[RMDB]
RNA sequence: GGGAACGACUCGAGUAGAGUCGAAAAGGAGGACGAAGCAUAUUUCUGAUUCUGGAGGAUUAUUUAUAAUCUGCCGGAAAGUCUUGCAGGUGGCUGGGAUAUGUUCAGUCUGGUAGAAUUAAGCACGAAAACGUGUCCUUGUUCGCAAGGACACGAACAGACCUAAGGAGUUCGCUCCUUAGGUCUGAAAAGAAACAACAACAACAAC
Reactivity to DMS in 0.01 (KOAc 150mM, MgCl2 10mM, bicine 150mM(pH8.5), 24C), signal-to-noise 1, nucleotides 027 to 156: g000g000a160g000g000a040c010g000a130a300g020c050a100u000a040u000u000u000c000u000g010a300u000u000c000u010g000g020a080g000g000a030u010u000a020u010u010u000a050u020a050a050u000c000u000g000c000c010g060g010a020a030a030g010u000c000u000u010g020c040a160g010g020u000g010g010c040u000g030g030g000a030u000a030u000g000u010u020c090a220g000u000c030u000g000g000u000a050g040a110a060u010u000a070a080g000c050a120c020g010a050a030a090a280c050g000u000g030u000c010c000u000u000g010u000u010c300g050c000a020a030g000g020a030c000a000c010g020a020a110
Reactivity to 2A3 in 0.01 (KOAc 150mM, MgCl2 10mM, bicine 150mM(pH8.5), 24C), signal-to-noise 1, nucleotides 027 to 156: g050g010a030g010g000a010c020g030a030a000g000c000a020u010a090u080u100u060c080u090g070a110u060u000c010u010g000g000a050g000g000a000u020u010a000u050u190u010a100u030a130a050u030c030u070g090c020c030g020g050a000a050a060g060u090c030u130u140g050c050a030g070g140u030g010g040c010u040g050g040g000a010u010a000u020g070u120u020c070a000g020u010c010u010g060g030u040a030g090a080a040u170u120a140a000g040c070a000c120g040a050a000a020a000c000g010u000g040u000c000c020u000u010g010u070u080c140g000c160a000a000g010g010a010c000a000c000g000a000a000
An RNA of 207 nucleotides, treated with DMS and 2A3 and read out base by base. The reactions ran in a buffer of 150 mM KOAc, 10 mM MgCl2 and 150 mM bicine (pH 8.5), at 24 C.